[RMDB]
RNA sequence: GGGAACGACUCGAGUAGAGUCGAAAACCCGUUCCACCCCCGCGGCACACUCCUUCCCCCCUGCGGGCCCCCCCAUAAGAUGGCAGGAACCCACUCAUUGGGGUCCGCUGUUCCAUUCUUUCUUACCACCACGCCGGGUUCGCCCGGCGUAAAAGAAACAACAACAACAAC
Reactivity to DMS in 0.01 (KOAc 150mM, MgCl2 10mM, bicine 150mM(pH8.5), 24C), signal-to-noise 3, nucleotides 027 to 129: c010c000c000g040u000u000c000c090a070c090c210c000c060c020g020c090g000g040c170a120c110a180c030u090c010c070u040u040c080c010c000c000c000c080u020g030c010g110g020g010c000c000c050c040c110c000c040a010u070a010a000g090a080u000g020g100c070a040g010g010a000a090c140c040c050a060c160u070c100a130u070u060g020g010g010g010u000c000c010g000c000u000g000u010u010c140c080a060u070u000c030u000u000u060c050u000u120a090c140c030a150c060c100